[RMDB]
RNA sequence: GGGAACGACUCGAGUAGAGUCGAAAAAUCAACACUUUUAAGUGUUAUUACCUCAGCUAAACCUAAAAUUGGUGCCUACCACUUUACCACUAUUGUACCAAAUUUAGGUAUGGUUCGCACCCAAUCACCGUACGGGUGCGUUCGCGCACCCGUACGGAAAAGAAACAACAACAACAAC
Reactivity to 2A3 in 0.01 (KOAc 150mM, MgCl2 10mM, bicine 150mM(pH8.5), 24C), signal-to-noise 2, nucleotides 027 to 126: a000u030c070a000a060c020a000c000u000u280u120u300a240a020g000u000g000u000u000a040u070u120a080c000c000u080c030a050g050c070u130a000a030a210c000c000u000a040a070a070a120u010u000g000g000u000g000c000c080u050a050c090c040a110c080u290u170u300a300c150c090a140c010u200a060u000u160g040u060a010c000c000a070a070a070u020u240u080a000g000g000u000a000u000g040g000u070u210c000g000c030a080c000c010c000a080a130u160c030a050
Structure probing data (2A3) for a 177-nucleotide construct. The RNA was probed in 150 mM KOAc, 10 mM MgCl2 and 150 mM bicine (pH 8.5) at 24 C. Source: RMDB library OK1LIB, as collected in RNAgym.